The record gives the reactivity of an RNA of 177 nucleotides to DMS. For DMS, 607 sequencing reads were counted.
RNA sequence: GGGAACGACUCGAGUAGAGUCGAAAAGAUAUGGAUAACCAUGCUCGCCUAAGACAGUUAGUCGGAAACGACUAAUCGAGGACCCGAGAAGGUUAUCCUAAGUCAAAGUGAAUGUUCGCAUUCACAAGGCAUUUGUUAUGUUCGCAUAACAAAUGCCAAAAGAAACAACAACAACAAC
Reactivity to DMS in 0.01 (KOAc 150mM, MgCl2 10mM, bicine 150mM(pH8.5), 24C), signal-to-noise 1, nucleotides 027 to 126: g000a000u010a260u000g000g010a030u000a010a050c010c000a020u000g010c010u000c000g000c180c070u000a150a080g060a190c300a030g000u000u000a000g010u020c000g010g070a080a060a050c040g010a040c000u000a000a010u000c040g040a110g050g000a190c230c160c110g000a000g040a010a050g050g000u000u000a010u000c000c000u010a020a200g010u000c040a020a050a230g000u000g020a020a020u000g010u000u010c300g040c020a010u000u000c000a000c000a110a130
Source: RMDB library TTRDEL, as collected in RNAgym.